[RMDB]
RNA sequence: GGGAACGACUCGAGUAGAGUCGAAAAUGGUGGCUCCAUCUUAGCCCUAGUCACGGCUAGCUGUGAAAGGUCCGUGAGCGGCAUGACUGCAGAGAGUGCUGAUACUGGCCUCUCCGCAGAUCAUGUAGAGUCCCCUCAGUUUCGACUGAGGGGACUCAAAAGAAACAACAACAACAAC
Reactivity to 2A3 in 0.01 (KOAc 150mM, MgCl2 10mM, bicine 150mM(pH8.5), 24C), signal-to-noise 1, nucleotides 027 to 126: u060g000g030u000g000g000c000u230c300c000a090u190c050u100u270a000g000c000c000c000u050a060g030u000c110a000c000g040g010c000u120a030g000c060u060g100u040g220a100a150a070g060g000u000c000c000g020u000g120a000g000c070g000g030c000a000u000g000a000c000u000g000c000a000g000a000g000a000g030u300g000c030u000g120a140u110a300c110u260g050g000c000c000u000c010u000c000c000g000c000a000g000a000u000c000a000u020g000u000a010

The data come from the RNA Mapping Database (RMDB), library RFM100. This 177-nucleotide RNA was probed chemically with 2A3. The 2A3 profile rests on 443 reads. Conditions: 150 mM KOAc, 10 mM MgCl2 and 150 mM bicine (pH 8.5), 24 C.